[RMDB]
RNA sequence: GGGAACGACUCGAGUAGAGUCGAAAAGAUAUGGACCUCGAACUACUCCUCAGUAGGCAUGUUGCGACGAAGCUUCUCGGAAACGAGAAGCAGAGCAACAUGCCUACGAGGAGCGAGGUCCUAAGUCGAGACAUAAGUACUUCGGUACUUAUGUCUCAAAAGAAACAACAACAACAAC
Reactivity to 2A3 in 0.01 (KOAc 150mM, MgCl2 10mM, bicine 150mM(pH8.5), 24C), signal-to-noise 3, nucleotides 027 to 126: g110a060u150a070u300g010g000a000c010c000u030c000g010a130a080c130u180a020c010u280c010c010u020c060a100g010u000a000g030g000c000a000u000g010u000u020g100c300g140a300c030g020a300a030g010c020u010u000c010u010c010g040g070a150a130a120c010g000a000g000a000a000g000c000a000g020a000g030c000a000a000c000a010u020g000c000c000u000a010c000g000a000g000g000a000g000c000g000a000g020g000u000c000c010u000a000a000g020u050c070
Reactivity to DMS in 0.01 (KOAc 150mM, MgCl2 10mM, bicine 150mM(pH8.5), 24C), signal-to-noise 3, nucleotides 027 to 126: g000a100u010a300u000g000g020a020c000c000u010c010g000a110a040c060u000a300c010u000c010c000u010c000a110g050u000a000g000g000c010a000u000g010u000u000g010c000g020a200c300g000a120a050g000c000u020u000c000u000c010g000g010a120a100a260c000g000a000g050a000a020g070c010a010g000a150g020c010a010a000c010a000u000g000c010c000u000a000c000g000a010g000g000a000g010c000g020a000g000g020u000c000c000u000a000a070g000u010c100